[RMDB]
RNA sequence: GGGAACGACUCGAGUAGAGUCGAAAAGGUUCCAUGUACCCUAGUGGCCAUUUUGUCCGCUCCCUGGGUCCCAUUGGUGACCUAGAAACAGAGAUCCAAGCGCUCAUGGUGGAGCACUCUUUAGCAGACAUCGUCUUUAGUUCGCUAAAGACGAUGUAAAAGAAACAACAACAACAAC
Reactivity to 2A3 in 0.01 (KOAc 150mM, MgCl2 10mM, bicine 150mM(pH8.5), 24C), signal-to-noise 9, nucleotides 027 to 126: g070g000u060u030c020c010a020u080g050u090a080c010c010c030u030a030g030u050g040g000c030c030a080u100u090u090u210g060u020c020c030g000c030u030c030c010c020u010g010g010g010u020c010c010c020a240u090u230g040g010u150g020a010c000c010u020a030g100a020a090a020c070a020g050a000g000a050u030c030c010a060a020g060c040g010c060u030c040a080u130g130g030u080g080g020a010g020c010a060c020u040c010u030u130u120a060g050c060a020g040
Reactivity to DMS in 0.01 (KOAc 150mM, MgCl2 10mM, bicine 150mM(pH8.5), 24C), signal-to-noise 4, nucleotides 027 to 126: g000g010u010u010c010c000a050u020g010u010a080c050c010c010u000a050g010u010g010g000c160c040a090u040u020u030u030g010u000c070c040g000c010u000c050c050c020u000g000g010g020u010c030c050c010a230u000u030g000g010u020g000a210c040c000u000a050g000a100a150a090c150a110g010a060g000a070u030c030c040a060a110g000c240g000c040u010c020a090u020g010g040u020g000g000a040g010c020a100c090u000c020u010u000u010a070g010c090a120g000